Conditions: 150 mM KOAc, 10 mM MgCl2 and 150 mM bicine (pH 8.5), 24 C. An RNA of 207 nucleotides, treated with 2A3 and read out base by base.
RNA sequence: GGGAACGACUCGAGUAGAGUCGAAAAGACCGUUAUCCGCGCCGGGCGCCCGCCAGACCCGCUGGCAAGAUGCCGCGCUCCUUCCUGGUCAAGAAGCAUUUCAACGCCUCCAAAAAGCCAAACUACAGCGAACUGGACACACAUACAGGUAAAAAGACGUAUUUAGCAGUUUCGACUGCUAAAUACGAAAAGAAACAACAACAACAAC
Reactivity to 2A3 in 0.01 (KOAc 150mM, MgCl2 10mM, bicine 150mM(pH8.5), 24C), signal-to-noise 1, nucleotides 027 to 156: g020a010c010c000g030u060u050a040u110c060c020g030c010g010c050c020g070g040g000c000g000c060c070c050g070c020c030a070g000a130c000c000c030g140c120u020g000g020c030a050a030g060a050u070g000c040c020g010c020g010c030u070c020c010u070u070c000c010u070g000g000u100c050a020a020g070a020a010g020c050a080u010u070u170c020a010a060c010g020c020c010u080c050c040a070a050a100a030a000g050c020c070a060a020a060c060u100a040c050a050g020c010g040a040a020c010u050g010g020a030c020a010c020a020c010a100u120a120c040a040g010g110u160a040a000a000a000a080g090a050

For 2A3 the reverse transcriptase was SuperScript II with manganese. Values cover nucleotides 27 to 156. The 2A3 profile rests on 641 reads.